Chemical mapping of a 177-nucleotide RNA with 2A3 and DMS.
[RMDB]
RNA sequence: GGGAACGACUCGAGUAGAGUCGAAAAGGCGGUAAAGCCAUAUCCGGAAAAAGGUAUUAGCGAAAUGCAAGCAAGCUCGGGGCGACGCCAACCGCAACGCCGUAGAACCAGAAUAUGGGAAUUAGGAGGAUACGGGAUAUUUCGAUAUCCCGUAUCCAAAAGAAACAACAACAACAAC
Reactivity to 2A3 in 0.01 (KOAc 150mM, MgCl2 10mM, bicine 150mM(pH8.5), 24C), signal-to-noise 4, nucleotides 027 to 126: g040g020c070g030g100u190a100a130a000g000c000c000a010u020a030u080c010c000g040g090a070a050a030a040a040g110g010u110a120u140u100a110g020c030g020a090a030a140u170g020c030a010a040g090c030a020a010g040c060u060c070g000g000g050g000c000g010a040c040g010c000c020a010a010c000c010g000c040a040a020c020g010c010c010g020u040a040g010a050a020c000c000a010g050a120a040u110a090u160g050g010g010a040a080u170u030a100g030g100a030
Reactivity to DMS in 0.01 (KOAc 150mM, MgCl2 10mM, bicine 150mM(pH8.5), 24C), signal-to-noise 3, nucleotides 027 to 126: g010g010c010g010g000u010a040a080a180g020c000c080a090u000a080u020c040c010g030g000a050a140a060a090a080g010g000u030a120u010u010a050g030c020g000a100a060a110u020g000c090a090a220g000c070a090a070g010c040u040c030g000g010g010g020c030g000a120c100g000c070c020a010a150c110c010g010c010a090a050c050g000c000c020g030u030a080g000a060a160c030c010a050g000a070a060u030a070u000g000g000g000a040a070u030u010a070g000g010a300
The data come from the RNA Mapping Database (RMDB), library OK1LIB. Reactivities are rounded to 0.1 and cut off at 0 and 3. The DMS profile rests on 4,448 reads.